Structure probing data (DMS and 2A3) for a 207-nucleotide construct. Reactivities are given for positions 27 through 156. Values are in units of 0.01, from 0 to 300, in steps of 10. It was measured as part of the RMDB library OK3TST.
RNA sequence: GGGAACGACUCGAGUAGAGUCGAAAAUUUUUUUCUGAUAGCUAAAGAACAAAAUACAUCAUUGAUUCAAUCAUGCAUUUAUUCAACAGGUAUUUUAUUGAGUGCCUACUAUGUACCAGACACUGUUCUAGGCUCUGGAGAGAAAAAUAGUAAACAAACUAACUCUAAUGUUCGCAUUAGAGUUAGUAAAAGAAACAACAACAACAAC
Reactivity to DMS in 0.01 (KOAc 150mM, MgCl2 10mM, bicine 150mM(pH8.5), 24C), signal-to-noise 2, nucleotides 027 to 156: u030u000u070u000u000u000u070c000u010g010a170u000a050g020c010u020a080a170a180g000a020a020c000a060a060a010a020u000a020c010a070u020c070a080u010u000g010a140u000u000c080a040a020u000c070a070u000g020c020a060u010u000u000a100u020u000c010a060a050c090a160g020g020u000a010u000u000u000u010a110u040u010g000a090g000u000g010c000c000u000a060c060u000a060u000g010u000a100c120c030a060g010a070c050a060c010u000g020u000u000c040u000a300g010g010c010u000c090u000g030g000a070g040a070g010a020a010a030a060a040u000a110g010u000a070a070a070c060a050a110
Reactivity to 2A3 in 0.01 (KOAc 150mM, MgCl2 10mM, bicine 150mM(pH8.5), 24C), signal-to-noise 3, nucleotides 027 to 156: u020u010u000u010u010u000u020c000u020g060a080u090a040g010c020u060a140a080a070g030a010a020c030a030a040a030a040u070a020c020a060u130c030a040u060u070g030a050u080u080c080a060a030u040c050a070u220g090c010a000u020u020u070a040u120u140c020a040a030c000a060g080g000u010a040u010u030u060u050a190u130u240g040a030g040u000g020c000c000u030a050c020u050a050u220g050u070a070c060c000a000g030a060c040a030c080u030g010u000u000c010u040a030g020g010c020u000c050u080g030g050a010g000a000g020a040a050a000a010a040u070a040g090u170a050a060a040c120a010a130